Record summary:
Chemical mapping of a 207-nucleotide RNA with 2A3 and DMS. Conditions: 150 mM KOAc, 10 mM MgCl2 and 150 mM bicine (pH 8.5), 24 C. Source: RMDB library RNAMAK, as collected in RNAgym. DMS adducts were read by reverse transcription with MarathonRT. For 2A3 the reverse transcriptase was SuperScript II with manganese.
RNA sequence: GGGAACGACUCGAGUAGAGUCGAAAAUGCGUCUUCGGACGCAAAAAAGCGUACUACUAGUCGGGCGCUAGCAACAGCGAACUACACUUUCCCAAAUAGGAAAGUGCGACAUGCUAGCGUUACGACUAGUAUCGCAAAAAAGCACGUUCGCGUGCAAACGUCCCAUAUGAUUCGUCAUAUGGGACGUAAAAGAAACAACAACAACAAC
Reactivity to 2A3 in 0.01 (KOAc 150mM, MgCl2 10mM, bicine 150mM(pH8.5), 24C), signal-to-noise 2, nucleotides 027 to 156: u070g000c000g010u000c000u010u030c180g090g000a020c050g000c000a140a000a000a000a040a000g070c050g010u060a050c050u010a000c000u000a000g000u010c000g000g060g000c010g010c000u000a010g000c000a010a150c060a130g030c020g140a080a030c050u260a000c120a000c010u000u030u030c020c000c030a280a230a080u210a040g010g020a000a000a000g000u010g040c040g050a040c000a070u120g000c030u010a000g010c000g000u000u020a000c000g000a000c000u000a000g000u000a000u000c010g000c000a020a020a020a020a020a020g010c010a000c000g000u050u130c160g010c010g060u030g040c010a100a070
Reactivity to DMS in 0.01 (KOAc 150mM, MgCl2 10mM, bicine 150mM(pH8.5), 24C), signal-to-noise 1, nucleotides 027 to 156: u010g050c000g000u000c010u000u000c300g060g020a030c000g040c000a000a000a050a070a060a120g020c010g000u000a120c100u010a010c000u010a010g000u000c000g010g020g020c000g000c000u000a020g030c000a120a160c120a220g020c110g010a160a150c040u000a030c000a000c000u010u000u000c000c000c010a000a190a250u030a040g030g010a030a010a010g000u000g000c000g030a130c130a220u000g000c000u010a010g020c010g030u010u010a010c050g000a010c000u000a000g010u000a000u000c000g000c010a000a010a030a070a090a120g030c010a030c000g020u000u000c200g010c020g000u000g000c010a000a060